[RMDB]
RNA sequence: GGGAACGACUCGAGUAGAGUCGAAAAAGGUGUUCACAAUUACCUGAAAGAGCUGCAUAUGGAACAGCCGGGCGACUACUGCAUUACUUAUAACGGCGCGCUGGUACAGAAGGCCGCCGAUGGUAGCCUGUACAUAUGGAUUCGUCCAUAUGUACAGAAAAGAAACAACAACAACAAC
Reactivity to 2A3 in 0.01 (KOAc 150mM, MgCl2 10mM, bicine 150mM(pH8.5), 24C), signal-to-noise 7, nucleotides 027 to 126: a000g060g010u060g010u120u120c060a020c020a190a090u110u060a080c010c010u040g040a100a090a030g060a050g020c020u040g010c030a090u110a140u300g080g070a110a040c010a010g020c030c010g020g030g010c020g050a060c020u090a030c010u050g020c020a070u150u070a040c030u120u130a090u060a300a060c010g010g000c010g000c060g000c020u050g030g060u200a060c030a070g260a150a040g060g000c010c000g000c020c000g020a010u010g020g010u010a020g040c010
Reactivity to DMS in 0.01 (KOAc 150mM, MgCl2 10mM, bicine 150mM(pH8.5), 24C), signal-to-noise 8, nucleotides 027 to 126: a060g010g020u000g010u000u000c080a070c120a110a100u010u000a070c020c010u000g000a100a140a120g000a120g010c040u000g010c060a070u010a120u010g010g000a090a080c050a070g010c020c030g010g000g020c050g010a060c060u000a070c080u000g010c070a070u000u000a050c060u000u000a090u010a120a170c030g000g010c000g010c180g020c010u000g010g010u000a120c270a160g000a140a190g000g000c010c020g000c010c010g010a020u000g000g000u000a040g020c160

Structure probing data (2A3 and DMS) for a 177-nucleotide construct. The data come from the RNA Mapping Database (RMDB), library OK2TRN. The DMS profile rests on 11,954 reads. For DMS the reverse transcriptase was MarathonRT. The reactions ran in a buffer of 150 mM KOAc, 10 mM MgCl2 and 150 mM bicine (pH 8.5), at 24 C. As a SHAPE reagent, 2A3 marks flexible, mostly unpaired nucleotides at the ribose 2'-OH.